[RMDB]
RNA sequence: GGGAACGACUCGAGUAGAGUCGAAAAGGUGGUGCCCAGGAGUUAUUGAUGCCCAACGCUGUCUGGCUUCUUUGCAGCUCCUCUCUCCUGCUCUCUGGCACUGCCACCAUCUUCAGAUGACUCAGGUUUCACCAUGACUACACCAUAAAAGCAGGGAUCGCAGCUAAAAUUUCGAUUUUAGCUGCGAAAAAGAAACAACAACAACAAC
Reactivity to 2A3 in 0.01 (KOAc 150mM, MgCl2 10mM, bicine 150mM(pH8.5), 24C), signal-to-noise 3, nucleotides 027 to 156: g020g000u030g010g020u000g000c020c030c030a000g050g000a000g030u160u120a090u150u150g050a050u080g000c020c010c010a030a090c040g030c160u100g020u080c020u050g050g020c030u050u040c030u070u130u100g060c070a040g010c020u050c000c000u010c020u000c010u030c000c010u000g000c030u050c020u060c060u090g010g000c020a000c020u020g000c000c010a000c000c000a040u050c030u150u120c020a060g040a140u040g030a080c030u020c110a050g100g000u010u100u100c070a060c050c010a040u100g010a040c040u130a040c080a060c040c020a030u090a220a120a010a000g020c020a030g070g020g050a030